[RMDB]
RNA sequence: GGGAACGACUCGAGUAGAGUCGAAAAACUCGUUCUCACACACGAGAGAUCGUUCACUCGUACGUUCACACACUCGAGUGUGAGUGAGUGUACUCGUGUACUCUCGUGAUCGAGAUCGAACUCUCGUACGUUCACUCUCGAGUACACGUGAGAACACCCUGACCAACGAUUUCGAUCGUUGGUCAGGAAAAGAAACAACAACAACAAC
Reactivity to 2A3 in 0.01 (KOAc 150mM, MgCl2 10mM, bicine 150mM(pH8.5), 24C), signal-to-noise 2, nucleotides 027 to 156: a000c070u040c100g010u010u000c000u000c000a020c000a000c000a000c020g010a000g010a000g010a040u100c120g090u120u060c040a000c000u000c010g030u050a020c020g010u000u010c000a020c000a000c010a000c010u200c250g200a260g190u100g010u020g080a120g020u030g000a010g000u040g010u000a000c000u010c040g000u010g010u110a100c010u000c000u000c000g000u000g010a020u000c000g000a000g010a030u030c100g000a030a010c000u100c020u070c090g190u240a130c100g000u010u000c050a030c070u050c000u000c010g010a010g010u080a090c070a060c290g000u000g000a010g050a000a000c030a040c000

Chemical mapping of a 207-nucleotide RNA with 2A3.
For 2A3 the reverse transcriptase was SuperScript II with manganese.
It was measured as part of the RMDB library OK3TST.